[RMDB]
Source: RMDB library M2RFPK, as collected in RNAgym. This 207-nucleotide RNA was probed chemically with DMS and 2A3. Values are in units of 0.01, from 0 to 300, in steps of 10. For 2A3 the reverse transcriptase was SuperScript II with manganese. Conditions: 150 mM KOAc, 10 mM MgCl2 and 150 mM bicine (pH 8.5), 24 C. In probing experiments dimethyl sulfate is read out at A N1 and C N3, which are open when not base-paired. The DMS profile rests on 8,633 reads.
RNA sequence: GGGAACGACUCGAGUAGAGUCGAAAACGUAAAGGGCGAGCUUUUGUCCGGAAUGGUUCCGCCGUGAUCGGGCCAUGCAAUAGUUGCCAACGACAACUAUGCUCUGGUUGCUCAGGCAGCGUAACGCACAAUGGAACAACCUUCGGGUUGUUCCAAAUCUUGCUUAUAUGUUCGCAUAUAAGCAAGAAAAAGAAACAACAACAACAAC
Reactivity to DMS in 0.01 (KOAc 150mM, MgCl2 10mM, bicine 150mM(pH8.5), 24C), signal-to-noise 3, nucleotides 027 to 156: c060g010u010a050a060a070g010g020g050c000g010a090g020c100u000u000u000u000g020u000c020c020g010g010a130a060u000g000g000u020u000c020c010g020c030c080g030u000g010a070u000c030g020g010g040c000c030a060u010g010c060a140a100u000a070g020u000u000g000c000c000a090a180c080g000a070c000a010a010c000u000a040u000g010c090u010c140u000g010g010u000u010g010c030u020c050a270g000g030c030a020g010c000g020u000a060a150c100g010c040a080c080a110a170u010g010g000a030a030c000a010a010c000c010u000u010c300g060g020g000u000u000g010u000u010c010c010a000a010a050
Reactivity to 2A3 in 0.01 (KOAc 150mM, MgCl2 10mM, bicine 150mM(pH8.5), 24C), signal-to-noise 6, nucleotides 027 to 156: c030g030u090a060a050a050g040g010g010c050g030a100g040c060u060u160u150u130g040u060c040c030g000g020a050a040u100g040g000u190u220c020c020g000c030c040g120u130g040a120u110c020g000g010g000c010c020a020u050g000c000a040a220u020a100g010u000u010g000c000c030a110a050c150g050a060c000a000a010c010u020a010u150g020c020u030c050u080g010g010u020u030g010c050u020c040a030g030g010c010a010g010c000g050u090a080a040c050g030c040a040c050a070a190u080g000g000a000a010c010a000a000c000c000u030u060c150g070g000g000u000u000g000u000u000c000c000a000a000a000